[RMDB]
RNA sequence: GGGAACGACUCGAGUAGAGUCGAAAAGCACGAAUCGUGAAACGAGUUGGGCACUGUCUCAACCAGGCGCUCAGUGAAAUUGUAGUGGCGGUGAAGAUGCCGCCUACCCGCAGAAGGACGGAAAGACCCAGUAUCCAUACUUCGGUAUGGAUACUGGAAAAGAAACAACAACAACAAC
Reactivity to 2A3 in 0.01 (KOAc 150mM, MgCl2 10mM, bicine 150mM(pH8.5), 24C), signal-to-noise 1, nucleotides 027 to 126: g080c010a010c030g010a040a060u060c040g020u130g110a060a040a190c090g000a080g140u010u000g030g020g020c020a090c300u100g000u120c040u000c080a000a050c010c000a010g000g060c060g020c050u030c090a000g040u000g080a060a090a220u140u130g160u110a080g010u050g060g000c050g000g040u060g080a050a050g170a130u300g000c000c000g000c000c000u050a030c000c010c020g000c020a000g080a100a050g090g020a020c000g030g090a080a070a010g060a040c000
Reactivity to DMS in 0.01 (KOAc 150mM, MgCl2 10mM, bicine 150mM(pH8.5), 24C), signal-to-noise 1, nucleotides 027 to 126: g020c060a000c040g000a100a130u000c040g000u010g020a090a130a130c080g060a160g020u030u000g000g000g000c010a100c140u000g010u030c030u010c100a040a040c080c060a100g010g000c030g040c030u000c050a160g000u000g010a100a010a110u010u000g040u000a110g030u000g030g000c000g040g010u000g000a080a130g000a180u010g020c020c000g020c000c000u000a020c110c010c020g000c080a040g010a080a070g010g000a070c080g010g000a040a100a040g000a100c160
The record gives the reactivity of an RNA of 177 nucleotides to 2A3 and DMS.
The data come from the RNA Mapping Database (RMDB), library RFMREP.
High 2A3 reactivity points to a flexible backbone, as in loops and unpaired stretches.
DMS adducts were read by reverse transcription with MarathonRT.